[RMDB]
RNA sequence: GGGAACGACUCGAGUAGAGUCGAAAAAAAAACAUGGUUACCAAAAGGAUUCCGUGAAGGUAGCCAUGAAACACGGAAUCCUUAUAAAAGCUGAGCGUUAGGAAAAACGUAAUGCUCAGCAAAAAAACUAACCUAAUAUGUUCGCAUAUUAGGUUAGAAAAGAAACAACAACAACAAC
Reactivity to DMS in 0.01 (KOAc 150mM, MgCl2 10mM, bicine 150mM(pH8.5), 24C), signal-to-noise 2, nucleotides 027 to 126: a120a060a050a060a090c040a010u000g000g000u000u000a120c070c010a130a130a060a010g000g000a020u010u000c020c010g050u000g000a170a080g010g000u030a040g020c120c080a050u020g000a030a030a170c030a010c000g000g000a030a030u000c000c000u000u000a010u000a110a080a080a080g010c000u000g010a000g010c010g020u000u000a000g010g000a070a090a100a180a120c060g010u000a010a000u000g020c010u030c000a000g010c000a030a000a020a050a020a040a050
The record gives the reactivity of an RNA of 177 nucleotides to DMS. Conditions: 150 mM KOAc, 10 mM MgCl2 and 150 mM bicine (pH 8.5), 24 C. The DMS profile rests on 1,722 reads.